[RMDB]
RNA sequence: GGGAACGACUCGAGUAGAGUCGAAAAGCUUACUCUGUCUGCUGAUUUUAUUGAUUCUUCAACAGCGGAAGAUCAAACAAUGAUAUGUACCGGAAAUAGCACUAACAAUGACUGGUCAACAAUACUGGCCAUCACGCGGUUUCGACCGCGUGAUGGCAAAAGAAACAACAACAACAAC
Reactivity to 2A3 in 0.01 (KOAc 150mM, MgCl2 10mM, bicine 150mM(pH8.5), 24C), signal-to-noise 1, nucleotides 027 to 126: g060c000u160u290a000c000u000c030u170g040u080c000u000g020c000u000g000a000u000u000u000u300a000u130u190g080a180u000u290c000u020u190c040a000a190c010a020g090c000g170g000a000a000g000a060u050c080a290a210a010c000a000a000u250g120a130u000a000u300g170u000a230c000c000g050g000a090a090a000u020a060g060c000a000c000u190a000a000c170a000a080u080g190a150c060u000g080g000u250c150a010a010c190a040a040u020a230c000u150g150